[RMDB]
RNA sequence: GGGAACGACUCGAGUAGAGUCGAAAAUUCGAUCCGGACCGGCUCAUCUCGGCAAAGGGCGGCAGUCCUCAGUGCUCUUACUCUUUCCUAUAAAGAGGAGACUGCUGGACUCGCCGCCCAAGCCCGACUCAUGUACAGUCUUCGGACUGUACAUGAGAAAAGAAACAACAACAACAAC
Reactivity to DMS in 0.01 (KOAc 150mM, MgCl2 10mM, bicine 150mM(pH8.5), 24C), signal-to-noise 1, nucleotides 027 to 126: u010u000c060g010a150u010c100c060g000g000a020c110c060g030g040c060u000c030a150u020c020u010c030g000g020c000a050a060a120g010g020g020c000g050g040c020a000g000u000c000c030u000c000a020g000u000g010c060u000c010u030u020a300c040u000c010u000u000u000c170c260u040a100u020a050a040a030g020a020g000g000a030g000a060c020u010g000c220u020g000g000a060c000u000c150g020c020c000g000c000c000c000a000a040g020c060c000c010g060a180
Reactivity to 2A3 in 0.01 (KOAc 150mM, MgCl2 10mM, bicine 150mM(pH8.5), 24C), signal-to-noise 1, nucleotides 027 to 126: u050u030c030g040a020u030c030c030g040g000a000c010c000g010g000c030u040c000a050u050c060u000c040g040g000c020a050a010a140g010g010g000c000g000g000c010a000g000u000c000c000u000c010a030g020u090g210c010u040c040u090u160a200c010u010c000u020u010u040c070c050u170a090u150a300a020a010g000a000g000g010a000g000a000c000u010g040c040u000g000g000a000c000u010c020g000c000c000g010c000c000c000a010a000g010c000c000c000g030a040